[RMDB]
RNA sequence: GGGAACGACUCGAGUAGAGUCGAAAAACACAAACUUCGGUUUGUGUAAAAAAUCCUAAGUCUUCCUUUGAUCGAUAUGCGAAGAACUAUCGGAAACGAUAGGGAGUGCAUAUCGGGAGGAAGAUAUGGAAAAAACCGCCACUUUCGAGUGGCGGAAGAAUAUUCUGAGAUUCGUCUCAGAAUAUUCAAAAGAAACAACAACAACAAC
Reactivity to 2A3 in 0.01 (KOAc 150mM, MgCl2 10mM, bicine 150mM(pH8.5), 24C), signal-to-noise 4, nucleotides 027 to 156: a000c000a000c000a010a000a000c000u050u060c110g050g000u000u000u010g000u000g000u000a010a000a000a000a000a050u030c020c010u040a130a060g030u000c000u020u010c000c000u200u210u110g090a120u240c010g000a000u000a000u000g020c030g060a170a050g020a280a070c000u000a000u000c000g040g060a130a060a060c010g000a000u000a000g020g000g020a050g090u130g000c000a000u010a000u000c000g000g000g000a010g000g000a000a010g000a000u020a040u020g000g090a060a080a010a010a030a050c010c030g010c000c020a010c010u070u100u130c280g100a010g010u000g010g000c000g000g000a010a010
Reactivity to DMS in 0.01 (KOAc 150mM, MgCl2 10mM, bicine 150mM(pH8.5), 24C), signal-to-noise 1, nucleotides 027 to 156: a030c000a010c010a020a020a030c000u000u000c200g070g040u010u000u030g060u000g000u040a000a010a080a130a060a030u010c010c000u000a080a280g050u000c000u000u000c010c000u040u000u010g010a120u010c010g010a020u000a010u000g030c000g020a130a120g030a240a200c010u010a020u000c010g000g000a270a110a280c010g010a000u000a000g000g000g000a300g010u000g010c000a030u000a000u010c060g000g000g000a020g000g020a020a000g000a000u000a080u000g010g020a000a070a100a100a090a110c020c010g010c010c000a030c010u010u020u000c270g040a070g000u000g000g010c000g020g000a010a060
The record gives the reactivity of an RNA of 207 nucleotides to 2A3 and DMS. Reactivities are rounded to 0.1 and cut off at 0 and 3. It was measured as part of the RMDB library RNAMAK. For 2A3 the reverse transcriptase was SuperScript II with manganese.